[RMDB]
RNA sequence: GGGAACGACUCGAGUAGAGUCGAAAAUCGGUACCGCCAGCGAUGCCGCGUUGGCGAUGGAGUUGGGUUGCGAUGCCGUGUUGUUGGCCAGUGCGGUGACCCGGGCCGCCGACCCGCCGGCGAUGGCCGGAUUCCUUCAGUUCGCUGAAGGAAUCCGAAAAGAAACAACAACAACAAC
Reactivity to 2A3 in 0.01 (KOAc 150mM, MgCl2 10mM, bicine 150mM(pH8.5), 24C), signal-to-noise 3, nucleotides 027 to 126: u090c030g010g010u060a060c000c000g020c020c000a000g010c000g080a080u130g040c010c000g060c010g030u010u040g000g010c020g000a040u040g020g030a100g050u140u090g030g000g000u040u130g030c040g020a050u090g010c020c020g020u030g030u120u040g030u050u040g040g000c040c020a030g020u030g130c030g070g010u050g030a070c000c000c030g020g010g000c000c000g040c010c000g020a050c020c000c000g010c020c000g010g000c060g030a110u110g030g000c010
Reactivity to DMS in 0.01 (KOAc 150mM, MgCl2 10mM, bicine 150mM(pH8.5), 24C), signal-to-noise 2, nucleotides 027 to 126: u030c050g000g000u010a040c110c030g000c000c040a060g010c010g020a090u030g000c020c050g030c010g030u030u020g000g000c040g010a050u010g020g010a120g000u000u000g000g000g010u010u030g060c050g020a060u010g000c060c030g000u030g060u000u040g000u020u000g000g000c050c050a110g020u010g010c010g000g000u000g000a050c010c000c030g000g000g000c020c000g000c020c030g000a110c030c030c040g020c070c010g000g030c040g000a080u030g000g000c100

Chemical mapping of a 177-nucleotide RNA with 2A3 and DMS. The reactions ran in a buffer of 150 mM KOAc, 10 mM MgCl2 and 150 mM bicine (pH 8.5), at 24 C. It was measured as part of the RMDB library OK1LIB. The 2A3 profile rests on 2,075 reads. The DMS profile rests on 4,573 reads.